The record gives the reactivity of an RNA of 207 nucleotides to 2A3 and DMS.
2A3 adducts were read by reverse transcription with SuperScript II with manganese.
The 2A3 profile rests on 3,044 reads.
Source: RMDB library OK3TST, as collected in RNAgym.
Conditions: 150 mM KOAc, 10 mM MgCl2 and 150 mM bicine (pH 8.5), 24 C.
[RMDB]
RNA sequence: GGGAACGACUCGAGUAGAGUCGAAAAGCAACAGAUAACUGGAUGCAGCGUAGGAUUCUACGCAUAUCCAGUACGAAUGGUACCUGUAAAGAAAAUAAGUGUGGAUGUACAAGUACCAACACACGGUUAAGCGAUGGUGAUGUCAAUCACAUUUGCAUAAAUAAUGGAGGUUCGCCUCCAUUAUUUAAAAAGAAACAACAACAACAAC
Reactivity to 2A3 in 0.01 (KOAc 150mM, MgCl2 10mM, bicine 150mM(pH8.5), 24C), signal-to-noise 5, nucleotides 027 to 156: g030c010a000a110c040a080g100a140u150a180a060c040u000g010g000a010u020g050c140a080g000c100g000u000a010g010g140a300u300u020c000u020a000c000g000c010a000u020a000u020c000c000a000g010u030a010c020g110a060a050u070g010g010u040a030c020c000u030g050u120a070a110a040g120a040a110a030a070u180a120a100g010u030g010u020g060g030a060u090g010u080a020c000a040a090g060u030a030c000c000a050a020c020a000c000a000c020g060g000u120u110a080a020g020c000g010a010u040g080g140u060g000a010u040g100u200c090a080a040u030c000a010c000a010u030u050u180g030c020a030
Reactivity to DMS in 0.01 (KOAc 150mM, MgCl2 10mM, bicine 150mM(pH8.5), 24C), signal-to-noise 5, nucleotides 027 to 156: g020c050a110a070c060a100g020a110u010a080a090c000u000g010g000a020u010g040c180a180g000c010g040u000a010g030g010a200u000u010c000u000a010c000g030c010a220u000a030u000c010c000a020g010u000a040c020g000a100a140u000g000g030u000a020c020c020u000g010u010a060a060a140g000a130a080a090a150u000a090a110g030u000g020u000g020g000a150u000g010u000a070c030a050a080g020u010a030c000c010a030a100c040a050c030a050c020g010g020u000u000a070a100g020c000g000a060u000g010g010u000g020a050u000g010u000c140a070a100u010c030a020c030a050u000u000u000g050c040a210